The record gives the reactivity of an RNA of 177 nucleotides to 2A3 and DMS. The DMS profile rests on 1,392 reads. As a SHAPE reagent, 2A3 marks flexible, mostly unpaired nucleotides at the ribose 2'-OH. DMS adducts were read by reverse transcription with MarathonRT. The RNA was probed in 150 mM KOAc, 10 mM MgCl2 and 150 mM bicine (pH 8.5) at 24 C. It was measured as part of the RMDB library TTRDEL. 2A3 adducts were read by reverse transcription with SuperScript II with manganese.
[RMDB]
RNA sequence: GGGAACGACUCGAGUAGAGUCGAAAAGAUAUGGAGUAACCUCUCAGCGCUACAUCGGAAACGAUGUAGAACUACGAACUACUGAAGUUACUCCUAAGUCAAACCCCGCUAGUUCGCUAGCGGGGAAGAGAGGUUAAUGGUUCGCCAUUAACCUCUCAAAAGAAACAACAACAACAAC
Reactivity to 2A3 in 0.01 (KOAc 150mM, MgCl2 10mM, bicine 150mM(pH8.5), 24C), signal-to-noise 2, nucleotides 027 to 126: g020a000u030a000u090g000g010a000g000u000a000a000c010c010u020c010u030c040a090g140c050g020c060u010a010c010a010u000c000g020g000a040a050a020c010g000a000u000g030u010a020g000a020a010c020u120a070c130g230a180a080c100u300a030c040u190g000a140a020g000u000u000a000c000u000c000c000u010a050a000g000u010c010a030a050a300c000c000c000c010g000c000u000a010g020u060u080c300g000c220u010a000g000c000g020g010g010g000a080a020
Reactivity to DMS in 0.01 (KOAc 150mM, MgCl2 10mM, bicine 150mM(pH8.5), 24C), signal-to-noise 2, nucleotides 027 to 126: g000a010u000a190u000g020g010a040g000u000a000a010c030c080u010c020u000c050a100g020c170g000c000u000a020c000a020u010c000g030g000a030a050a130c010g000a000u000g000u000a000g010a030a060c180u000a150c150g000a040a070c080u000a180c060u020g000a010a030g010u000u010a010c020u010c000c010u000a000a060g000u010c000a120a140a150c000c000c000c000g030c010u000a000g000u000u010c260g000c030u000a000g020c000g010g000g010g000a020a020